[RMDB]
RNA sequence: GGGAACGACUCGAGUAGAGUCGAAAACAGUGCGAUAAGGGGACUCCAUCUGCGAGGGCAUAUCGUCCUCGCUUUUCUGUACCGUAAGGUGGUACAGGAAUAAGGGCUGGGCAAGACCGGUGCCAGCCCAUGAUGGUAAAUUCGUUUACCAUCAUGGAAAAGAAACAACAACAACAAC
Reactivity to DMS in 0.01 (KOAc 150mM, MgCl2 10mM, bicine 150mM(pH8.5), 24C), signal-to-noise 9, nucleotides 027 to 126: c080a080g010u010g010c050g010a060u010a070a080g000g000g000g010a120c050u010c050c050a080u020c120u010g010c000g010a010g010g010g000c000a140u040a090u030c190g010u000c000c000u000c000g000c010u000u000u000u000c000u000g000u000a000c000c000g010u040a120a140g020g030u030g000g010u000a000c000a000g000g000a010a030u040a080a100g000g000g000c000u000g000g000g010c020a060a100g000a130c100c070g000g010u000g010c010c000a020g000c020
Reactivity to 2A3 in 0.01 (KOAc 150mM, MgCl2 10mM, bicine 150mM(pH8.5), 24C), signal-to-noise 9, nucleotides 027 to 126: c040a010g070u060g080c030g040a060u050a130a060g010g020g010g030a040c020u020c040c020a110u060c060u090g000c000g000a010g010g010g000c030a060u160a100u300c140g000u000c000c000u000c000g000c000u000u000u000u000c000u000g000u000a000c000c010g070u110a090a100g160g120u180g030g000u060a000c000a000g020g030a000a010u100a050a060g020g010g000c010u020g010g030g020c030a070a040g040a080c020c030g020g010u030g050c000c010a010g000c010
Conditions: 150 mM KOAc, 10 mM MgCl2 and 150 mM bicine (pH 8.5), 24 C. An RNA of 177 nucleotides, treated with DMS and 2A3 and read out base by base. For DMS the reverse transcriptase was MarathonRT. For 2A3 the reverse transcriptase was SuperScript II with manganese. The data come from the RNA Mapping Database (RMDB), libraries RFM100 and RFMREP.